[RMDB]
RNA sequence: GGGAACGACUCGAGUAGAGUCGAAAAUUGCGCCUCCGAUUCGCGGUCGGCAUUUCCCCAGCAGCCAUGACCUACCAGGCUGCGGUGCGGCUCGCCGCACAGGUCAUCCCUCAUCGGGCGCGUCCUGGAUAGGGCUAUACUUUCGAGUAUAGCCCAACCUCUGUGCAGUAUUCGUACUGCACAGAGGAAAAGAAACAACAACAACAAC
Reactivity to 2A3 in 0.01 (KOAc 150mM, MgCl2 10mM, bicine 150mM(pH8.5), 24C), signal-to-noise 2, nucleotides 027 to 156: u120u110g070c050g030c030c070u030c030c020g060a090u060u140c100g010c060g020g000u030c090g030g000c050a020u060u070u050c020c000c000c030a020g020c000a010g000c000c000a190u140g020a090c040c050u090a180c070c100a030g000g000c000u000g000c020g000g000u040g010c010g000g000c030u060c160g150c020c010g010c000a010c000a010g040g010u020c010a090u050c030c000c000u080c040a100u060c060g010g020g000c020g000c030g020u100c020c010u060g060g010a120u120a190g020g000g000c000u000a000u010a000c000u040u060u190c180g060a010g020u000a000u000a000g000c010c000c000a000a020